Source: RMDB library 15KREP, as collected in RNAgym. Chemical mapping of a 177-nucleotide RNA with DMS.
[RMDB]
RNA sequence: GGGAACGACUCGAGUAGAGUCGAAAAUCGUCGUCAUCCUUGGCUAACCGCUCAAGUUCCUCCUCUUCCUCUCGGCUGAGGUGCUUCCCUCCCGCGGCCAGCUGCUUCUUCUUGUUCUCCAGGGCCUGAAUAUUCCCUUGUUCGCAAGGGAAUAUUCAAAAGAAACAACAACAACAAC
Reactivity to DMS in 0.01 (KOAc 150mM, MgCl2 10mM, bicine 150mM(pH8.5), 24C), signal-to-noise 2, nucleotides 027 to 126: u000c060g000u010c040g000u000c050a080u000c060c020u010u010g000g000c050u000a130a140c080c070g000c060u010c080a080a130g020u000u000c020c010u000c040c020u000c020u000u020c020c010u010c060u010c110g000g050c050u020g010a070g020g020u000g000c060u010u000c010c010c020u000c060c000c000g010c100g000g010c050c030a080g010c060u000g000c040u000u000c030u000u000c020u000u000g010u000u010c030u000c020c040a070g020g000g010c160c090u010
The reactions ran in a buffer of 150 mM KOAc, 10 mM MgCl2 and 150 mM bicine (pH 8.5), at 24 C.